[RMDB]
RNA sequence: GGGAACGACUCGAGUAGAGUCGAAAAUUUUGCCCGGGGUUCCUGCAAGGGCAAUACAUCGGGGGUUUUUCUGAUUGGUACCGCUCAUGCAUCGGUGAAAAGGGGAUAUUUGUUCAGUGAGCCUGGCUAUCCCACUCAAUUUCGAUUGAGUGGGAUAAAAAGAAACAACAACAACAAC
Reactivity to DMS in 0.01 (KOAc 150mM, MgCl2 10mM, bicine 150mM(pH8.5), 24C), signal-to-noise 1, nucleotides 027 to 126: u000u010u000u010g000c000c010c010g050g000g030g000u000u000c020c020u000g010c140a080a130g000g020g040c010a030a070u010a100c090a050u000c100g030g000g040g000g010u000u000u010u020u000c020u010g000a080u000u000g040g010u010a050c070c030g010c040u010c040a090u010g020c040a120u000c080g000g000u000g000a040a040a090a130g000g000g000g030a060u000a110u000u010u000g010u000u000c040a070g000u010g010a090g030c030c020u010g010g030c160